RNA sequence: GGGAACGACUCGAGUAGAGUCGAAAAUUGACCUUCGCCUAUCCAUUAAUUAAGAAUAACAACCAUAUAACUCUAAGUGCUGGGAGUGGCUUAAGAGUAUCCGGAGGUAGCCUUACUGUGGCCACUGCUUUCAUACCCGAUUCGUCGGGUAUGAAAGAAAAGAAACAACAACAACAAC
Reactivity to 2A3 in 0.01 (KOAc 150mM, MgCl2 10mM, bicine 150mM(pH8.5), 24C), signal-to-noise 1, nucleotides 027 to 126: u050u050g060a030c010c000u000u000c030g020c000c000u000a030u040c020c030a080u180u100a060a110u160u070a180a060g090a100a090u070a080a080c050a040a040c010c030a010u030a010u040a270a050c020u000c030u050a070a050g050u030g090c010u050g110g080g000a050g020u040g040g020c000u040u020a100a000g080a000g060u040a040u000c060c030g020g000a010g030g040u020a020g030c000c010u050u050a070c050u090g030u050g090g000c000c000a040c040u020g000
Reactivity to DMS in 0.01 (KOAc 150mM, MgCl2 10mM, bicine 150mM(pH8.5), 24C), signal-to-noise 2, nucleotides 027 to 126: u020u000g000a070c010c050u000u000c030g000c010c010u000a040u000c030c020a110u000u000a080a130u020u010a060a100g000a120a060u020a080a060c120a040a070c030c050a100u000a110u000a130a060c070u000c040u000a060a090g010u010g000c130u010g020g020g000a110g030u000g000g000c020u000u000a070a080g000a060g010u000a030u000c090c060g000g000a100g000g000u000a050g000c020c030u000u010a120c230u010g030u000g010g020c020c040a020c090u000g000
Background:
An RNA of 177 nucleotides, treated with 2A3 and DMS and read out base by base. For DMS the reverse transcriptase was MarathonRT. DMS (dimethyl sulfate) methylates the pairing face of unpaired adenines and cytosines. 2A3 adducts were read by reverse transcription with SuperScript II with manganese. Source: RMDB library OK2TST, as collected in RNAgym. The 2A3 profile rests on 1,022 reads.